RNA sequence: GGGAACGACUCGAGUAGAGUCGAAAAGAUAUGGAUUUCGGCGAUAUCAUGAGGUAGACAUGAAGUGUGAUUCGGAAACGAAUCAAACUUCAACAGCUACUCAUGAUAUCGCCGAAAUCCUAAGUCACGAUUAAAUCCGGUUCGCCGGAUUUAAUCGAAAAGAAACAACAACAACAAC
Reactivity to DMS in 0.01 (KOAc 150mM, MgCl2 10mM, bicine 150mM(pH8.5), 24C), signal-to-noise 1, nucleotides 027 to 126: g000a050u000a300u000g000g030a010u000u000u000c000g000g040c000g000a030u000a020u010c000a020u010g020a130g000g050u000a010g020a020c070a290u000g000a000a000g070u010g000u010g030a020u000u000c000g000g000a090a110a300c010g030a020a000u000c020a010a040a010c030u000u000c000a020a110c290a200g000c010u000a010c000u000c000a010u000g000a000u000a000u030c010g010c000c000g000a000a000a000u000c010c000u010a010a060g000u000c050a210